[RMDB]
RNA sequence: GGGAACGACUCGAGUAGAGUCGAAAAGAUAUGGAAACGUGAAGCUAGCCGAGGUGAGAACUACAACCUCUAAUCGGAAACGAUUAAGUUGCUCACCGUUUGACGCUAGCUUCACGUUUCCUAAGUCCCUGGCCUUUAAGUUCGCUUAAAGGCCAGGAAAAGAAACAACAACAACAAC
Reactivity to DMS in 0.01 (KOAc 150mM, MgCl2 10mM, bicine 150mM(pH8.5), 24C), signal-to-noise 1, nucleotides 027 to 126: g000a040u000a200u020g030g000a000a000a060c000g040u000g000a010a010g040c000u000a000g000c000c010g020a120g020g030u000g010a010g070a110a020c120u010a300c010a040a020c000c000u010c010u000a010a010u000c000g010g010a130a180a210c010g030a000u000u000a000a120g000u000u000g000c020u000c000a000c000c010g000u010u000u020g010a060c300g000c000u020a000g050c000u000u000c000a000c010g020u000u040u000c010c000u000a010a090g000u000c020
Chemical mapping of a 177-nucleotide RNA with DMS. It was measured as part of the RMDB library TTRINS. The RNA was probed in 150 mM KOAc, 10 mM MgCl2 and 150 mM bicine (pH 8.5) at 24 C. Reactivities are given for positions 27 through 126. For DMS the reverse transcriptase was MarathonRT.